[RMDB]
RNA sequence: GGGAACGACUCGAGUAGAGUCGAAAAGAUAUGGAGACUCAAGGAUAACGCCGUGACAGGGAGAAUAACAUCGGAAACGAUGUCGAUUCUUUGAUCUGUACGGCGUUAUCCUUGAGUCUCCUAAGUCGUAAUUUGUAAUCUUCGGAUUACAAAUUACAAAAGAAACAACAACAACAAC
Reactivity to DMS in 0.01 (KOAc 150mM, MgCl2 10mM, bicine 150mM(pH8.5), 24C), signal-to-noise 1, nucleotides 027 to 126: g010a150u010a300u010g000g000a030g000a020c010u000c000a000a010g010g020a010u010a010a000c000g000c000c000g000u010g010a000c000a000g000g000g010a000g000a030a010u010a130a030c000a020u000c000g010g000a130a170a270c010g000a020u000g020u000c180g000a030u000u000c000u000u010u020g000a030u020c000u000g000u000a010c000g020g030c000g010u000u000a000u020c000c000u010u000g000a010g000u010c000u010c000c010u000a000a050g000u030c160
Background: This 177-nucleotide RNA was probed chemically with DMS. The DMS profile rests on 2,217 reads. DMS adducts were read by reverse transcription with MarathonRT.